[RMDB]
RNA sequence: GGGAACGACUCGAGUAGAGUCGAAAACAGGCCAAUUCCCCAAGCGGGUACAGCUGGGCCCGAACAGAGUGGGAUGGGUUGAGGACGAAGUGCUGGACUGGCUUCAGCAACGGCUGGAUGGCCGCGAUUUCCGUGGAACAUUCGUGUUCCACGGAAAAAAAGAAACAACAACAACAAC
Reactivity to DMS in 0.01 (KOAc 150mM, MgCl2 10mM, bicine 150mM(pH8.5), 24C), signal-to-noise 2, nucleotides 027 to 126: c180a110g010g010c000c030a080a140u020u000c030c000c000c110a150a080g000c020g000g000g060u020a060c110a080g000c180u040g000g020g000c010c020c090g000a170a140c140a050g020a080g080u030g000g020g000a090u020g000g000g000u040u000g010a150g030g000a160c080g000a080a100g000u030g030c000u000g010g000a090c000u030g000g000c070u000u040c020a020g010c060a060a050c080g020g000c010u020g030g000a180u040g010g000c000c000g000c100g000a110
Reactivity to 2A3 in 0.01 (KOAc 150mM, MgCl2 10mM, bicine 150mM(pH8.5), 24C), signal-to-noise 1, nucleotides 027 to 126: c000a070g010g020c000c000a030a150u220u190c000c000c000c000a110a040g000c060g050g000g020u110a080c050a050g030c020u150g030g000g150c000c000c000g060a060a070c060a130g050a000g140u140g000g040g000a050u030g000g080g030u010u020g030a040g000g030a010c110g060a130a040g030u000g050c040u030g000g000a020c000u070g040g020c000u000u020c000a020g000c000a010a020c000g000g000c000u010g000g180a080u060g080g000c070c000g000c000g080a000